[RMDB]
RNA sequence: GGGAACGACUCGAGUAGAGUCGAAAACAGGGUUGAGAAACACCACUAUAGAAGCUCCAAAUCCACAAGUACUGACAUCAUCAGCCUAGAGAAAUCCUCAAAAAGUCUGGGGAGUUAUUUGUGGCUGACGGAGUCAGCACUUCGGUGCUGACUCCGUAAAAGAAACAACAACAACAAC
Reactivity to 2A3 in 0.01 (KOAc 150mM, MgCl2 10mM, bicine 150mM(pH8.5), 24C), signal-to-noise 3, nucleotides 027 to 126: c050a000g080g000g010u020u050g030a000g080a110a140a010c050a030c050c010a090c010u050a050u030a200g190a040a010g060c010u020c020c030a110a040a040u020c030c000a060c010a130a080g030u050a110c020u100g130a030c040a180u110c000a010u000c020a040g000c010c020u000a010g000a000g000a120a100a100u010c040c010u070c030a050a220a150a030a050g240u160c190u060g000g010g040g000a010g020u050u090a040u070u060u050g120u040g050g000c030u010g000
Reactivity to DMS in 0.01 (KOAc 150mM, MgCl2 10mM, bicine 150mM(pH8.5), 24C), signal-to-noise 1, nucleotides 027 to 126: c040a200g030g020g000u010u000g000a090g010a120a080a060c050a080c000c030a040c050u080a070u000a050g000a150a060g010c000u030c030c050a040a100a080u020c000c000a050c060a070a070g050u000a010c060u000g000a080c130a060u000c080a070u000c000a010g000c040c000u000a080g020a070g000a030a120a010u000c010c000u000c000a000a060a050a070a030g020u040c080u020g010g010g000g000a050g000u000u000a020u000u040u000g000u000g020g040c090u000g000